[RMDB]
RNA sequence: GGGAACGACUCGAGUAGAGUCGAAAAGGUAAGAUGGGAAUUUGGAAUGGUUCGCUGAAGGCUGAAUUAAGACCCAUGGAAAAAGUUCAAGAGAAUAAGACACGUUCUUUUACAGCAGCACCAAUCGAUAAACACAACCGUUCGCGGUUGUGUUUAUAAAAGAAACAACAACAACAAC
Reactivity to 2A3 in 0.01 (KOAc 150mM, MgCl2 10mM, bicine 150mM(pH8.5), 24C), signal-to-noise 2, nucleotides 027 to 126: g100g030u120a050a000g070a130u100g000g020g000a150a190u110u130u000g130g030a120a020u150g050g020u060u060c000g000c200u040g020a030a020g210g000c040u080g050a010a000u090u000a160a000g070a020c000c000c000a000u040g020g000a000a000a000a010a010g000u020u040c070a030a000g040a000g030a070a040u120a270a000g060a030c020a030c190g000u000u000c000u070u030u010u010a100c080a030g040c000a010g000c000a000c020c000a030a020u080c040g040
Reactivity to DMS in 0.01 (KOAc 150mM, MgCl2 10mM, bicine 150mM(pH8.5), 24C), signal-to-noise 3, nucleotides 027 to 126: g000g000u000a020a040g010a070u040g000g000g010a080a080u000u000u000g000g010a120a210u010g010g010u000u010c070g000c010u020g000a100a120g000g000c050u000g000a120a090u000u010a040a090g000a100c040c000c000a080u020g040g000a110a050a070a080a050g000u010u040c090a020a070g010a080g000a040a060u010a100a130g000a070c220a100c120g020u010u000c010u000u020u010u010a160c100a010g000c040a040g020c070a110c020c030a030a080u010c190g000